RNA sequence: GGGAACGACUCGAGUAGAGUCGAAAAAACACAAGAAUCGGAAGUCUUCCCGAAGACGCCGGGGACAUCUCGGAAUGAGAAAGGAGACAGGUGGAAGAAAAAGGGGUGGGCCCCCCGAUCCGAGGGGUAGGAUGACGGUUCGCCGUCAUCAAAAGAAACAACAACAACAAC
Reactivity to DMS in 0.01 (KOAc 150mM, MgCl2 10mM, bicine 150mM(pH8.5), 24C), signal-to-noise 7, nucleotides 027 to 129: a140a030c120a080c120a140a100g010a090a050u030c000g030g000a080a040g020u030c040u000u000c030c020c040g020a140a060g010a100c170g030c070c070g000g000g000g000a080c110a000u000c010u000c070g030g040a000a000u050g000a070g020a080a150a050g030g010a040g020a050c120a030g060g030u020g000g000a050a050g020a030a060a040a070a080g010g010g010g000u000g000g010g010c060c020c010c030c000c020g020a030u030c100c050g030a080g020g010g040g040u000a090g000
Reactivity to 2A3 in 0.01 (KOAc 150mM, MgCl2 10mM, bicine 150mM(pH8.5), 24C), signal-to-noise 3, nucleotides 027 to 129: a000a000c170a030c060a060a020g040a090a080u110c050g050g030a060a030g040u000c010u030u030c030c000c000g020a020a020g040a010c040g020c040c020g010g000g000g040a020c000a060u030c010u010c030g040g050a030a030u120g020a020g030a050a050a010g040g020a030g010a010c050a000g000g050u080g050g040a100a070g050a040a040a020a000a000g020g010g000g020u060g000g000g000c000c000c000c000c000c000g010a040u040c020c010g020a040g000g000g000g000u000a030g070
This 170-nucleotide RNA was probed chemically with DMS and 2A3.
It was measured as part of the RMDB library 15KLIB.
For DMS the reverse transcriptase was MarathonRT.
The reactions ran in a buffer of 150 mM KOAc, 10 mM MgCl2 and 150 mM bicine (pH 8.5), at 24 C.